[RMDB]
The record gives the reactivity of an RNA of 177 nucleotides to DMS and 2A3. For 2A3, 749 sequencing reads were counted. Conditions: 150 mM KOAc, 10 mM MgCl2 and 150 mM bicine (pH 8.5), 24 C.
RNA sequence: GGGAACGACUCGAGUAGAGUCGAAAAGCCAGUUGGUGUUGUAGACACUGAGUGGGGUAACAUGUUAACGGGCAUUGCUGCACGUCCUCCACCAGGUGAACAGUUUAAGCACCUCGUGCCUCUUAUGCCAUGUUCAAAUCUUCGGAUUUGAACAUGGAAAAGAAACAACAACAACAAC
Reactivity to DMS in 0.01 (KOAc 150mM, MgCl2 10mM, bicine 150mM(pH8.5), 24C), signal-to-noise 2, nucleotides 027 to 126: g010c010c030a130g040u020u000g010g040u000g020u000u020g010u000a170g000a120c110a080c050u000g000a160g050u010g020g000g020g000u000a120a130c150a030u020g010u020u020a100a100c050g000g000g050c040a130u000u040g020c210u010g000c000a000c010g010u020c170c010u010c020c010a020c010c080a090g000g030u000g010a040a120c140a080g010u010u000u010a080a080g000c040a000c030c070u000c140g000u010g010c000c030u000c030u000u000a030u020g000
Reactivity to 2A3 in 0.01 (KOAc 150mM, MgCl2 10mM, bicine 150mM(pH8.5), 24C), signal-to-noise 1, nucleotides 027 to 126: g070c000c050a040g060u080u070g000g000u050g020u100u000g090u020a080g000a090c010a010c050u010g010a070g070u010g010g110g000g000u080a130a030c010a080u090g000u070u260a040a040c010g040g000g000c020a040u100u190g090c120u050g000c040a010c020g040u000c050c000u050c000c010a010c010c010a000g060g030u060g090a100a050c050a020g000u010u000u090a020a010g000c010a020c010c030u040c040g000u090g050c030c000u080c070u010u030a030u280g060